[RMDB]
RNA sequence: GGGAACGACUCGAGUAGAGUCGAAAACGGCGAGGCGCGCCGAUUCCGCAGGGUCGAACCGGGCCGACGGCAGGUGGUGCGGGUAGUUGUCCGGAUGACGCAGCAGGUACACCGAAGCGCCCGCAGCGUGCUGUUAGAGGUUCGCCUCUAACAGCACAAAAGAAACAACAACAACAAC
Reactivity to 2A3 in 0.01 (KOAc 150mM, MgCl2 10mM, bicine 150mM(pH8.5), 24C), signal-to-noise 2, nucleotides 027 to 126: c010g050g020c010g010a100g030g000c010g010c000g000c060c020g000a020u110u000c000c010g000c030a060g110g070g010u040c020g030a110a060c090c030g000g060g000c000c040g080a060c070g040g070c050a100g050g210u170g090g180u090g020c040g030g020g000u030a100g040u040u110g000u040c030c000g030g000a110u080g020a010c070g000c180a020g030c050a050g090g010u080a060c010a020c030c000g020a090a000g020c020g000c000c030c030g000c000a010g110c010
Reactivity to DMS in 0.01 (KOAc 150mM, MgCl2 10mM, bicine 150mM(pH8.5), 24C), signal-to-noise 1, nucleotides 027 to 126: c050g000g000c020g000a140g000g000c050g030c040g010c120c020g000a170u010u000c040c030g010c080a200g010g000g020u000c060g020a120a080c030c010g010g020g000c000c020g000a090c070g010g030c040a050g010g000u000g000g040u000g010c040g000g000g030u000a030g010u020u000g020u010c030c070g000g000a180u000g020a080c060g010c100a080g020c070a040g000g010u000a100c120a070c070c020g000a070a120g010c000g000c010c000c010g040c030a090g000c110
The record gives the reactivity of an RNA of 177 nucleotides to 2A3 and DMS. For DMS, 1,223 sequencing reads were counted. For 2A3 the reverse transcriptase was SuperScript II with manganese. The data come from the RNA Mapping Database (RMDB), library OK2TRN.